[RMDB]
RNA sequence: GGGAACGACUCGAGUAGAGUCGAAAAACCUCGCUGUUUUCUUGGCUAACUUUCAGCGAGGUGAGGCAAGGCGGCAAAAAAAAGUUGGGAGCAGCAACGGCAAGCAAAAAGAAAGUUCCAGCCGAGGCACUUAGUGCAAGCUUCGGCUUGCACUAAAAUCAUCAUACAAUUUCGAUUGUAUGAUGAUAAAAGAAACAACAACAACAAC
Reactivity to 2A3 in 0.01 (KOAc 150mM, MgCl2 10mM, bicine 150mM(pH8.5), 24C), signal-to-noise 2, nucleotides 027 to 156: a000c000c000u000c000g020c010u010g010u010u030u050u060c060u150u210g080g000c030u050a060a050c030u040u040u030c000a000g000c010g010a000g000g000u040g010a070g050g020c060a050a040g010g000c010g000g020c020a120a000a010a010a000a000a000a000g040u050u060g030g020g020a030g040c030a010g010c030a040a040c030g010g000c010a020a020g020c020a000a080a070a020a040g090a050a080a020g010u040u040c060c010a010g000c000c010g020a020g030g000c030a010c140u030u020a010g000u010g000c000a000a020g000c000u020u050c100g040g000c010u000u000g000c000a000c000u010a000a000a000
Reactivity to DMS in 0.01 (KOAc 150mM, MgCl2 10mM, bicine 150mM(pH8.5), 24C), signal-to-noise 2, nucleotides 027 to 156: a030c000c000u000c020g010c010u000g010u000u000u000u010c010u000u000g000g020c010u000a060a070c020u000u000u000c000a050g000c010g020a080g010g010u000g000a030g000g040c030a100a070g020g010c060g070g000c020a020a000a000a070a050a040a040a050g030u000u000g000g000g010a110g010c060a080g020c000a080a080c060g000g010c050a100a110g000c060a050a040a050a040a080g000a080a050a070g000u000u010c030c050a110g010c020c000g000a110g020g010c060a050c070u000u010a020g020u000g000c000a020a030g000c000u000u000c300g040g010c010u000u010g000c000a030c020u000a000a010a070